[RMDB]
An RNA of 177 nucleotides, treated with DMS and 2A3 and read out base by base. The 2A3 profile rests on 2,769 reads. As a SHAPE reagent, 2A3 marks flexible, mostly unpaired nucleotides at the ribose 2'-OH. Reactivities are given for positions 27 through 126.
RNA sequence: GGGAACGACUCGAGUAGAGUCGAAAAGUAAGCCUUGGGGACAUCUUAUGAUACUGUUUGUUUAUGCUUGAGGCUAACAAGGAACUUAAGAUGUGCAGGAGGUGAGAUUGAGUCACAUCCAUUGAGAGUCAAUAGUGCAUUUCGAUGCACUAUUGACAAAAGAAACAACAACAACAAC
Reactivity to DMS in 0.01 (KOAc 150mM, MgCl2 10mM, bicine 150mM(pH8.5), 24C), signal-to-noise 4, nucleotides 027 to 126: g020u000a070a260g010c020c010u000u020g020g000g020g000a050c020a010u010c010u000u000a030u000g000a170u030a130c090u010g000u030u010u000g010u010u010u010a070u010g030c060u000u010g010a100g040g000c010u000a020a010c030a050a080g030g010a140a120c020u000u000a010a020g000a010u000g010u000g010c100a120g000g000a020g010g030u010g020a060g020a180u000u000g000a110g000u000c060a060c080a100u000c010c030a120u000u000g000a130g000a180
Reactivity to 2A3 in 0.01 (KOAc 150mM, MgCl2 10mM, bicine 150mM(pH8.5), 24C), signal-to-noise 2, nucleotides 027 to 126: g050u040a050a010g020c000c000u040u070g010g020g050g050a000c010a000u000c020u020u060a020u050g060a070u050a140c040u000g140u230u050u020g090u010u140u030a110u150g050c050u070u200g160a100g110g050c000u010a000a000c000a050a020g020g000a000a030c000u010u010a030a010g000a020u000g000u060g080c040a030g040g050a010g000g010u050g010a070g020a050u080u220g020a030g050u030c010a010c000a040u000c010c010a040u100u240g120a190g020a020
For DMS the reverse transcriptase was MarathonRT. It was measured as part of the RMDB library OK2TST.